[RMDB]
RNA sequence: GGGAACGACUCGAGUAGAGUCGAAAAGCUGGGGACGAAGCCGCCCCCGGGCGCUCCCCUCUGUCCACCUUCGAGGGGGUUCACACCCCCAACCGGCGGGCCGGCUGCUCUUCUUUCCCUUCUCUCGCUACAGAUGGGUUCGCCCAUCUGAAAAGAAACAACAACAACAAC
Reactivity to DMS in 0.01 (KOAc 150mM, MgCl2 10mM, bicine 150mM(pH8.5), 24C), signal-to-noise 9, nucleotides 027 to 129: g040c110u010g010g010g010g020a040c070g040a040a030g020c050c020g020c060c020c020c010c000g020g010g020c100g020c070u000c020c010c010c000u030c020u030g000u020c040c060a060c080c070u000u010c120g020a110g020g020g010g000g020u040u060c160a130c170a250c030c030c000c000c020a040a060c010c030g030g020c120g030g000g020c080c050g030g020c020u020g020c120u030c020u060u000c000u030u030u000c010c000c040u000u000c030u010c010u000c090g020c070u020a140
Reactivity to 2A3 in 0.01 (KOAc 150mM, MgCl2 10mM, bicine 150mM(pH8.5), 24C), signal-to-noise 9, nucleotides 027 to 129: g070c090u060g000g000g010g010a020c040g100a090a010g010c010c000g010c000c000c000c000c000g020g010g030c060g050c040u110c000c010c020c000u020c010u040g090u040c030c050a080c060c050u100u120c060g040a100g000g010g010g000g030u130u140c040a050c000a030c050c010c000c000c000a020a030c010c010g010g010c100g040g020g000c060c020g020g000c010u040g040c040u000c010u080u030c010u010u040u030c010c000c000u060u010c040u000c010u020c040g060c050u070a060